[RMDB]
RNA sequence: GGGAACGACUCGAGUAGAGUCGAAAAGCUUGCAGAUGCUGGAGUAGUAGGUAGCGGGUUCUGGUUCGGGUUCCGAGUCUGGUUUGUGGCGAUGACGCGGAGUGGGUUCCGGGCGUACUGGCGGACGCGGAGUGGGUUCCGGGCGUACUGGCGGACGGAACUCGCUCCCAUUCGUGGGAGCGAGUUCAAAAGAAACAACAACAACAAC
Reactivity to 2A3 in 0.01 (KOAc 150mM, MgCl2 10mM, bicine 150mM(pH8.5), 24C), signal-to-noise 1, nucleotides 027 to 156: g040c080u130u110g040c030a010g010a160u040g080c010u090g020g050a040g010u110a010g000u030a020g080g030u050a090g040c100g010g030g100u130u020c050u120g100g000u060u080c020g080g010g020u040u160c060c000g030a020g000u020c020u050g000g140u050u100u130g050u050g080g030c030g040a030u100g020a010c020g000c040g110g010a080g020u070g010g040g030u140u020c020c000g030g000g010c010g000u090a060c060u020g080g000c030g020g000a020c070g010c000g050g020a060g030u150g030g030g000u070u040c010c000g000g000g000c000g020u020a040c040u000g020g040c040g000g000a010c030g010